RNA sequence: GGGAACGACUCGAGUAGAGUCGAAAAAUUCAGGAGAGUAGAUGAUUCGCGUUAACUGUGUGUGAAUGGGAUGUCGUCACACAACGAAGCGAGAGCGCGGUGAAUCAUUGCAUCCGCUCCAAACGAAACGACGUAUCUAAUUCGUUAGAUACGUCGUAAAAGAAACAACAACAACAAC
Reactivity to DMS in 0.01 (KOAc 150mM, MgCl2 10mM, bicine 150mM(pH8.5), 24C), signal-to-noise 6, nucleotides 027 to 126: a120u000u010c070a130g000g020a030g000a040g010u000a300g010a020u000g000a020u000u000c000g010c020g010u010u010a060a110c140u000g030u010g010u010g010u000g000a040a050u010g010g000g000a010u000g000u010c240g000u000c000a000c010a010c000a020a040c070g010a120a090g020c010g000a180g010a150g010c020g010c090g010g020u000g000a020a010u000c030a010u000u000g000c020a020u000c010c010g000c000u000c000c010a060a090a090c190g000a050a070
Reactivity to 2A3 in 0.01 (KOAc 150mM, MgCl2 10mM, bicine 150mM(pH8.5), 24C), signal-to-noise 3, nucleotides 027 to 126: a000u100u060c030a020g010g010a020g000a000g000u040a010g010a020u010g010a010u010u020c010g000c010g030u050u090a070a050c050u030g020u000g000u000g000u000g040a040a010u020g000g020g010a010u030g030u080c080g000u020c020a000c000a000c000a060a100c030g040a090a000g020c010g030a060g030a030g100c020g000c000g020g000u010g000a000a010u000c000a010u000u020g000c010a010u000c000c000g000c010u000c000c000a040a080a030c120g070a100a080